[RMDB]
RNA sequence: GGGAACGACUCGAGUAGAGUCGAAAAAGUUUCCAAUUCGUUGGAAACUACUGUCGGAAUGCGGAAUAUAAAAUCCUCCGCUUAAGGAUUUUACCGACUUAUAGUACACUAGUUUCGACUAGUGUAACUUUAACUCUAUAUUCGUAUAGAGUUAAAGAAAAGAAACAACAACAACAAC
Reactivity to 2A3 in 0.01 (KOAc 150mM, MgCl2 10mM, bicine 150mM(pH8.5), 24C), signal-to-noise 5, nucleotides 027 to 126: a000g000u000u000u000c000c000a000a020u070u080c190g030u030u010g000g000a010a000a000c000u030a070c040u050g010u010c010g010g030a110a040u130g020c010g000g050a060a020u180a020u050a120a130a040a050u050c020c020u010c000c040g080c030u020u050a050a020g070g010a020u060u100u070u190a060c010c010g010a010c000u080u100a210u050a120g090u030a000c000a000c010u000a000g010u010u050u090c200g080a010c010u010a010g000u000g000u000a000a010
Reactivity to DMS in 0.01 (KOAc 150mM, MgCl2 10mM, bicine 150mM(pH8.5), 24C), signal-to-noise 6, nucleotides 027 to 126: a270g000u000u000u000c000c000a010a020u000u010c150g020u000u000g010g000a010a000a010c000u000a040c050u000g010u000c010g000g010a160a090u010g010c020g010g000a050a030u010a090u000a080a070a130a090u010c240c040u000c050c060g010c060u000u000a060a080g010g000a120u010u010u000u000a120c010c000g000a010c010u010u010a070u010a110g000u000a010c000a010c010u000a010g000u000u000u010c180g010a020c000u000a010g010u000g000u000a010a050

The record gives the reactivity of an RNA of 177 nucleotides to 2A3 and DMS. The data come from the RNA Mapping Database (RMDB), library M2PK50. 2A3 adducts were read by reverse transcription with SuperScript II with manganese. The reactions ran in a buffer of 150 mM KOAc, 10 mM MgCl2 and 150 mM bicine (pH 8.5), at 24 C. DMS (dimethyl sulfate) methylates the pairing face of unpaired adenines and cytosines.